[RMDB]
The record gives the reactivity of an RNA of 207 nucleotides to DMS and 2A3. Source: RMDB library ARCHII, as collected in RNAgym. Values cover nucleotides 27 to 156. DMS adducts were read by reverse transcription with MarathonRT. For 2A3, 8,477 sequencing reads were counted. Values are in units of 0.01, from 0 to 300, in steps of 10.

RNA sequence: GGGAACGACUCGAGUAGAGUCGAAAACGUUGUCGUAGCGCUGCGGGCCUGGUUUGAGAGUGCUAUUGUUGGCCCGCCCGUUCCAAGUUGCGUAGUGGACAGCUGGGGCCUAUGCGAAAGCUGGGCCUCACGGUCCAUAAUGUGGCAGGCACAGCGUGUUAUACAUAGACUUCGGUCUAUGUAUAACAAAAGAAACAACAACAACAAC
Reactivity to DMS in 0.01 (KOAc 150mM, MgCl2 10mM, bicine 150mM(pH8.5), 24C), signal-to-noise 2, nucleotides 027 to 156: c050g000u010u000g000u000c020g020u000a090g000c040g010c070u010g010c000g000g010g040c000c000u020g010g020u000u010u000g010a090g010a140g040u000g020c000u000a130u000u010g020u000u010g000g020c000c000c000g010c020c110c020g100u010u000c030c050a060a290g030u000u010g020c010g030u000a210g000u000g010g010a020c000a060g030c150u020g030g010g010g030c000c010u000a030u000g030c020g000a160a090a200g030c010u000g020g010g020c000c000u000c010a000c070g000g020u000c000c010a050u000a010a070u000g030u000g020g020c040a090g010g020c050a050c030a070g040c060g010u000
Reactivity to 2A3 in 0.01 (KOAc 150mM, MgCl2 10mM, bicine 150mM(pH8.5), 24C), signal-to-noise 7, nucleotides 027 to 156: c050g010u010u020g040u060c070g080u100a050g020c010g000c090u080g000c030g000g000g020c010c030u110g080g060u130u190u200g090a110g010a030g040u130g020c030u090a110u140u270g110u070u090g010g000c000c000c010g000c000c010c000g000u060u030c030c020a090a050g030u040u030g030c020g030u060a040g020u030g000g000a010c010a020g030c190u030g000g000g000g000c010c010u090a160u300g000c000g020a080a020a010g010c000u010g000g000g000c000c000u000c000a000c000g010g000u000c000c000a000u030a010a030u060g010u030g030g010c030a020g020g050c030a020c000a040g020c010g020u050